[RMDB]
RNA sequence: GGGAACGACUCGAGUAGAGUCGAAAACAUGUAAAGCACAAAAUAUGUUAGCUGAGUUAUUUGGCACUAACUUUAAAACGUAUUAUGUAGCUGAACAAAUUGAGCGUUCUAAACAUAAUCCUGAUGGAACAGACUAUGUUGAACCAUCCACAAGUACGACGGUUUGGUUUUUCGAAACCAAACCGUCAAAAGAAACAACAACAACAAC
Reactivity to 2A3 in 0.01 (KOAc 150mM, MgCl2 10mM, bicine 150mM(pH8.5), 24C), signal-to-noise 1, nucleotides 027 to 156: c060a010u080g040u180a020a040a000g010c040a030c000a010a050a040a030u040a000u030g030u060u070a040g020c110u020g050a000g000u030u010a140u120u100u140g180g000c120a050c020u000a030a020c000u040u000u170a000a290a000a000c000g030u050a020u000u000a010u060g030u040a120g020c000u000g010a010a010c050a050a020a070u220u270g040a000g000c030g000u010u000c000u110a050a050a050c000a020u090a000a030u140c030c000u000g010a060u080g150g080a160a030c030a020g040a000c030u040a040u050g050u010u020g030a040a000c000c000a020u040c000c000a100c040a090a070g100u150a040c050